Conditions: 150 mM KOAc, 10 mM MgCl2 and 150 mM bicine (pH 8.5), 24 C. Chemical mapping of a 177-nucleotide RNA with DMS and 2A3. The 2A3 profile rests on 10,776 reads. For 2A3 the reverse transcriptase was SuperScript II with manganese. For DMS the reverse transcriptase was MarathonRT.
RNA sequence: GGGAACGACUCGAGUAGAGUCGAAAACUCAGUGUCUCACUCAGUGUCACAGAGAGUCUGAGUGACACACUCAGUGUGAGUGUGAGAGUCUCUGUGAGUCACUCAGAGAGUGACACUGUGUGUGAGAUGAUAUACCUCUCUUCGGAGAGGUAUAUCAAAAAGAAACAACAACAACAAC
Reactivity to DMS in 0.01 (KOAc 150mM, MgCl2 10mM, bicine 150mM(pH8.5), 24C), signal-to-noise 7, nucleotides 027 to 126: c020u000c030a150g010u010g010u000c010u000c000a020c000u000c010a020g010u000g010u000c000a010c010a140g010a170g010a140g010u000c000u000g010a060g010u000g010a140c010a060c000a000c000u000c010a190g030u010g030u010g010a020g020u000g020u000g000a110g010a180g000u010c030u000c030u000g020u010g010a070g010u000c010a010c000u010c030a030g010a060g000a190g010u000g010a040c000a010c010u000g010u000g010u000g010u000g000a020g000a040
Reactivity to 2A3 in 0.01 (KOAc 150mM, MgCl2 10mM, bicine 150mM(pH8.5), 24C), signal-to-noise 6, nucleotides 027 to 126: c020u020c040a060g080u020g030u230c010u000c010a010c000u020c000a010g010u000g010u010c010a010c020a010g210a040g020a060g300u000c000u010g020a020g020u020g020a000c000a000c000a000c000u010c020a110g110u090g100u130g300a010g000u030g000u050g030a080g010a020g210u040c030u020c010u100g140u050g080a010g020u010c000a010c000u020c010a000g010a000g000a030g040u010g000a000c000a000c000u000g000u000g000u010g010u000g020a020g000a010